[RMDB]
RNA sequence: GGGAACGACUCGAGUAGAGUCGAAAAGAAAGCUCCUCAACCGUGUGGAGGAGAAUGGCUAUAACCACAGAAACCUGAGGAAACAGGAAGCCACAACGCAAGCCAUGUGGUUGGCACACGGAAGAAAGACUAUCCUGCCAUUCGUGGCAGGAUAGUCAAAAGAAACAACAACAACAAC
Reactivity to DMS in 0.01 (KOAc 150mM, MgCl2 10mM, bicine 150mM(pH8.5), 24C), signal-to-noise 2, nucleotides 027 to 126: g020a120a010a100g000c020u010c010c000u000c000a080a030c000c000g000u010g000u000g000g050a010g030g030a000g000a040a070u010g000g000c000u020a090u020a080a190c050c030a090c150a080g010a060a070a130c030c000u000g010a230g040g000a120a060a080c010a000g000g000a110a170g000c000c000a020c200a080a130c020g050c190a040a100g000c090c230a160u010g000u000g000g010u000u010g000g000c040a000c000a010c000g000g000a300a110g000a110a190a070
Reactivity to 2A3 in 0.01 (KOAc 150mM, MgCl2 10mM, bicine 150mM(pH8.5), 24C), signal-to-noise 2, nucleotides 027 to 126: g130a020a060a000g030c020u000c000c000u010c000a020a180c000c000g030u030g000u000g010g000a030g000g000a010g240a080a000u080g020g000c020u000a000u040a270a070c040c040a000c010a050g140a060a100a090c000c030u010g010a010g000g300a210a080a010c010a000g000g010a030a030g050c030c000a090c030a060a100c110g060c140a110a020g010c010c040a090u020g000u000g000g070u000u070g130g000c000a000c000a000c040g020g000a000a000g030a010a030a000